[RMDB]
RNA sequence: GGGAACGACUCGAGUAGAGUCGAAAACAGGCGCGAAAACUCUACAAUGCAGGCAACUGCGAUAGGGGGACAUCGAGUGGCAUCCACCUUGGGUGCCUGUCCAACCGUCUAAAAAACGGUUGUUAGCUAUACAUUAACGUUUCGACGUUAAUGUAUAAAAAGAAACAACAACAACAAC
Reactivity to 2A3 in 0.01 (KOAc 150mM, MgCl2 10mM, bicine 150mM(pH8.5), 24C), signal-to-noise 9, nucleotides 027 to 126: c030a020g060g000c020g000c010g120a020a030a070a080c010u020c010u050a030c070a120a120u230g000c010a000g030g010c030a080a090c040u010g010c010g030a020u060a030g010g010g010g010g020a010c010a060u120c070g070a040g100u110g020g000c010a010u010c000c000a100c080c130u100u130g010g000g000u000g000c000c000u010g010u000c000c000a010a010c000c000g000u020c010u050a040a040a020a010a000a000c020g010g000u000u010g010u030u070a020g010c010
Reactivity to DMS in 0.01 (KOAc 150mM, MgCl2 10mM, bicine 150mM(pH8.5), 24C), signal-to-noise 9, nucleotides 027 to 126: c080a100g000g010c040g000c030g020a070a070a090a150c020u010c010u010a040c110a110a110u020g000c010a010g000g000c260a080a150c010u000g000c010g000a070u010a030g010g000g000g010g000a140c130a070u010c090g010a110g010u010g000g010c030a030u000c020c010a120c210c180u020u030g010g010g010u000g000c000c000u010g010u020c110c000a030a030c070c000g000u000c010u010a000a040a090a080a090a020c020g000g000u000u000g010u010u010a060g010c130